[RMDB]
RNA sequence: GGGAACGACUCGAGUAGAGUCGAAAAGAAAGAAAGAAAGAAGAACAGUGAUGAGUCAGUUUACAGACCUGUAAUGAUUGCGGUAAUGAUCGCAUUAUUAUGAACAUCUAAGGGACUGAGUUCUUAACCGUAUCCGGUCGUUCGCGACCGGAUACGGAAAAGAAACAACAACAACAAC
Reactivity to 2A3 in 0.01 (KOAc 150mM, MgCl2 10mM, bicine 150mM(pH8.5), 24C), signal-to-noise 1, nucleotides 027 to 126: g130a010a000a010g180a000a010a000g120a130a070a010g100a080a020g000a000a000c030a080g020u080g080a090u000g000a000g040u000c000a000g000u040u000u090a000c040a000g100a010c180c000u070g000u040a000a000u000g060a000u000u300g020c000g030g000u030a170a250u190g300a060u140c000g010c000a020u020u020a000u000u040a000u100g020a010a000c060a000u010c000u000a080a060g000g000g000a000c000u000g000a090g040u000u080c000u020u020a070a000
Structure probing data (2A3) for a 177-nucleotide construct. Source: RMDB library RFM100, as collected in RNAgym. Reactivities are given for positions 27 through 126. The 2A3 profile rests on 369 reads.